This 177-nucleotide RNA was probed chemically with DMS and 2A3. Values are in units of 0.01, from 0 to 300, in steps of 10. The reactions ran in a buffer of 150 mM KOAc, 10 mM MgCl2 and 150 mM bicine (pH 8.5), at 24 C. The DMS profile rests on 2,047 reads.
[RMDB]
RNA sequence: GGGAACGACUCGAGUAGAGUCGAAAACAAACAAACAAAACAACAAGUGCCGAAAUAAACUCGCUGUAAGGGAUGACGGAAAGAAAACCAAGUCAUCCCAAAACGGCACAAAACAGCGAAAACAAAACACCAUGGUAAUGUUCGCAUUACCAUGGUGAAAAGAAACAACAACAACAAC
Reactivity to DMS in 0.01 (KOAc 150mM, MgCl2 10mM, bicine 150mM(pH8.5), 24C), signal-to-noise 2, nucleotides 027 to 126: c040a200a130a080c270a120a060a200c300a120a030a240a020c170a060a060c150a060a210g010u000g060c050c000g000a090a140a120u000a060a050a100c140u000c000g010c000u000g000u000a100a080g000g000g010a000u000g060a010c050g000g020a100a050a160g000a100a060a040a150c080c060a150a070g010u000c000a000u000c000c000c020a010a020a060a110c030g000g000c010a050c000a000a000a160a040c050a060g000c000g000a000a020a000a020c120a080a010a100a080
Reactivity to 2A3 in 0.01 (KOAc 150mM, MgCl2 10mM, bicine 150mM(pH8.5), 24C), signal-to-noise 3, nucleotides 027 to 126: c010a020a040a000c110a030a200a040c140a080a140a030a030c190a040a000c020a220a110g020u030g010c000c010g080a090a160a000u220a020a110a040c040u000c020g010c010u030g000u020a080a090g000g000g010a000u010g020a000c020g030g060a090a090a070g240a010a130a060a000c010c010a070a020g000u000c010a000u000c030c000c000a000a020a000a000c000g000g010c010a000c000a000a050a020a000c000a000g000c000g010a060a040a010a060c050a000a100a000a010